[RMDB]
Source: RMDB libraries RFM100 and RFMREP, as collected in RNAgym.
Structure probing data (DMS and 2A3) for a 177-nucleotide construct.
RNA sequence: GGGAACGACUCGAGUAGAGUCGAAAACACUUUUAAUCAUGAGAAAGAAAUUACCCACAUGGAGUCAGCAGAAAAUGAGAAAGUAGAGCUCGUGCUGCGAAUAAUUCCAGCAAGUGCCAAGGGGCUAAGAUGAGUAGUAUUUCGAUACUACUCAUCUAAAAGAAACAACAACAACAAC
Reactivity to DMS in 0.01 (KOAc 150mM, MgCl2 10mM, bicine 150mM(pH8.5), 24C), signal-to-noise 9, nucleotides 027 to 126: c160a100c030u010u010u010u010a040a130u030c090a090u030g010a200g000a040a040a050g010a070a080a100u010u000a120c030c000c010a110c180a080u020g010g010a040g010u000c080a130g010c020a030g010a040a050a070a040u010g010a040g010a060a060a110g010u030a090g010a160g010c020u000c020g020u010g020c000u000g010c050g020a060a150u030a080a090u020u000c020c000a050g010c130a050a070g000u000g000c020c030a070a100g000g010g010g020c090u000a080
Reactivity to 2A3 in 0.01 (KOAc 150mM, MgCl2 10mM, bicine 150mM(pH8.5), 24C), signal-to-noise 9, nucleotides 027 to 126: c050a030c020u070u060u050u170a170a140u180c110a120u170g140a050g090a100a060a000g070a010a100a030u090u080a130c010c000c010a030c020a050u060g000g010a020g050u050c030a020g000c020a010g080a060a130a050a060u080g010a040g030a080a090a040g080u150a050g030a030g050c020u010c030g020u030g020c000u010g000c020g010a010a020u210a100a060u130u000c000c000a000g030c030a070a020g040u030g070c010c030a070a100g080g000g030g000c010u040a060
The RNA was probed in 150 mM KOAc, 10 mM MgCl2 and 150 mM bicine (pH 8.5) at 24 C.